[RMDB]
RNA sequence: GGGAACGACUCGAGUAGAGUCGAAAAAGAGCCACCGAGAACAUUAUCUCUGCAGUCGCUCGCUCAUUCAGGUUCUCACGUGUGUGCCAGCCGAAGUGUGCCUGGGAAAACACUGAGGUCGCGUUCGGUUCUAAGAGGGAUUCGUCCCUCUUAGAACAAAAGAAACAACAACAACAAC
Reactivity to 2A3 in 0.01 (KOAc 150mM, MgCl2 10mM, bicine 150mM(pH8.5), 24C), signal-to-noise 2, nucleotides 027 to 126: a010g060a040g010c020c000a010c010c050g010a030g010a070a040c070a200u190u230a250u200c020u010c070u180g090c110a020g030u060c030g030c000u040c020g040c010u030c040a100u120u080c070a060g060g060u030u100c020u000c030a060c120g090u120g030u030g070u080g150c030c020a040g040c020c000g070a190a140g070u090g010u100g070c020c060u060g030g000g020a050a120a030a000c020a010c010u030g020a020g000g030u050c010g000c010g100u130u100c050g040